[RMDB]
RNA sequence: GGGAACGACUCGAGUAGAGUCGAAAACCUGCAGGCCGAAUGGGACGUCGCCCUGGACGAGGUCCAGCCGGUGUUGCGCAAGGACGGCCUGAAGGCGGCGGUACAGGUGUUGAAGCAGGGCAUGAAAAUUACCUAUGCGUUUCGACGCAUAGGUAAUAAAAGAAACAACAACAACAAC
Reactivity to DMS in 0.01 (KOAc 150mM, MgCl2 10mM, bicine 150mM(pH8.5), 24C), signal-to-noise 5, nucleotides 027 to 126: c000c000u010g030c020a120g000g020c020c010g010a150a140u000g000g010g000a110c010g000u000c020g030c020c030c010u000g010g000a030c020g020a150g020g000u010c000c010a130g010c150c070g010g020u000g010u000u000g020c090g020c100a110a190g010g020a130c020g000g010c010c000u000g010a060a080g000g010c040g020g000c040g020g010u010a050c060a060g000g020u000g010u000u010g000a120a130g020c030a040g010g000g010c120a070u010g000a050a050a100
Reactivity to 2A3 in 0.01 (KOAc 150mM, MgCl2 10mM, bicine 150mM(pH8.5), 24C), signal-to-noise 2, nucleotides 027 to 126: c000c000u010g000c020a020g040g040c010c020g090a180a050u120g020g030g120a090c010g030u020c020g000c000c000c020u030g010g020a040c090g300a110g050g110u000c000c010a000g010c070c030g020g000u110g090u070u240g050c060g000c020a060a040g110g010a030c030g000g040c030c000u000g010a030a010g000g000c000g010g000c020g000g000u070a040c030a030g010g000u120g070u230u160g060a070a020g000c050a020g000g030g000c000a040u170g040a060a110a000